Source: RMDB library OK3TST, as collected in RNAgym. This 207-nucleotide RNA was probed chemically with 2A3. 2A3 is a SHAPE reagent: it acylates the 2'-hydroxyl of flexible nucleotides of all four kinds. 2A3 adducts were read by reverse transcription with SuperScript II with manganese. The RNA was probed in 150 mM KOAc, 10 mM MgCl2 and 150 mM bicine (pH 8.5) at 24 C. Values cover nucleotides 27 to 156.
RNA sequence: GGGAACGACUCGAGUAGAGUCGAAAAGACAUUUUCAUUCAAAACAAGGAUGGCCAUAUUCAGUGUUCCUGAUCAGUGACUUUAAUCAUACAUAUUGUGAAGUUAAUAACUGCUGUGUGUUUGAACAGAAAGGCAUACUUUGGAGUGACAAUUGUUACGGUCGGUGGAGUUUCGACUCCACCGACCGAAAAGAAACAACAACAACAAC
Reactivity to 2A3 in 0.01 (KOAc 150mM, MgCl2 10mM, bicine 150mM(pH8.5), 24C), signal-to-noise 2, nucleotides 027 to 156: g080a020c000a050u050u040u030u080c030a020u000u040c050a060a040a300a190c030a040a000g030g000a020u030g070g060c010c010a080u100a200u130u090c050a040g080u000g030u150u110c000c020u060g070a100u110c070a030g010u020g100a050c000u080u070u130a090a030u060c010a000u030a240c040a060u210a220u180u080g020u010g150a110a010g020u020u090a210a010u040a210a000c040u050g040c050u020g030u060g020u040g020u110u080u130g010a010a010c020a010g000a010a010a010g020g010c020a010u060a110c000u000u160u050g040g010a050g000u020g020a020c030a070a170u090u060g010u030u110a020